[RMDB]
RNA sequence: GGGAACGACUCGAGUAGAGUCGAAAAGCGUACUACAAGCAGCAUGUGUGUAAUAUACCUACCCACCAUACGUCCCAAAUAGGACGUAUGAGGGUAUUUAAGCACAUGAACUACUGCUUGUAUCGCAAAUCCUUGGCAACUUCGGUUGCCAAGGAAAGUCCUAUAACAUCUUCGGAUGUUAUAGGACAAAAGAAACAACAACAACAAC
Reactivity to 2A3 in 0.01 (KOAc 150mM, MgCl2 10mM, bicine 150mM(pH8.5), 24C), signal-to-noise 4, nucleotides 027 to 156: g010c010g030u080a090c030u000a000c040a010a000g000c000a000g000c000a000u000g010u000g000u010g030u080a030a090u040a030u010a090c000c010u060a090c070c060c030a070c040c000a010u000a000c000g010u010c020c020c020a160a280a090u300a120g010g000a000c010g010u010a000u000g000a010g000g000g010u000a010u000u100u020a030a010g010c010a000c000a010u000g000a010a050c060u300a030c000u190g000c000u010u000g020u000a010u060c000g000c010a060a080a010u000c000c000u000u000g010g010c000a000a000c010u060u050c190g160g000u030u000g000c000c000a000a000g000g000a000a010a000
Reactivity to DMS in 0.01 (KOAc 150mM, MgCl2 10mM, bicine 150mM(pH8.5), 24C), signal-to-noise 2, nucleotides 027 to 156: g010c010g050u000a080c160u010a000c000a040a030g000c030a020g020c030a030u010g040u010g010u000g020u000a080a120u000a060u000a010c010c000u010a030c000c000c010a300c080c010a030u000a020c010g000u000c000c000c000a100a070a250u020a030g000g000a040c010g040u000a000u000g000a100g000g000g000u000a000u000u000u020a070a300g000c000a030c020a060u000g030a040a230c060u010a110c020u010g020c000u000u000g000u000a010u000c000g030c020a110a140a100u000c000c020u000u000g020g040c000a020a010c010u000u000c250g020g040u000u020g010c000c000a010a000g000g030a000a030a040